[RMDB]
RNA sequence: GGGAACGACUCGAGUAGAGUCGAAAAAGCAACGAGUGUGUGUGGGACGUUUUAUCCCAAGGUCUGAGUAGAGCACGCGCUCACACACACCGCGAGCGAGCAUCAGCAGAGCGCAAACGCUGGUAAAAUCGACAGACCAUUUCGAUGGUCUGUCGAUAAAAGAAACAACAACAACAAC
Reactivity to DMS in 0.01 (KOAc 150mM, MgCl2 10mM, bicine 150mM(pH8.5), 24C), signal-to-noise 1, nucleotides 027 to 126: a030g000c050a180a040c050g030a260g050u000g000u000g010u000g040u000g000g000g000a150c040g000u000u000u000u000a300u040c010c010c010a070a000g000g000u000c070u000g040a070g000u000a030g000a030g020c120a070c080g060c140g020c000u000c000a000c010a000c000a020c000a010c010c070g000c040g080a250g000c050g010a120g000c110a070u000c030a020g010c010a110g020a120g010c080g010c200a080a090a120c100g000c010u000g040g000u010a130a010a020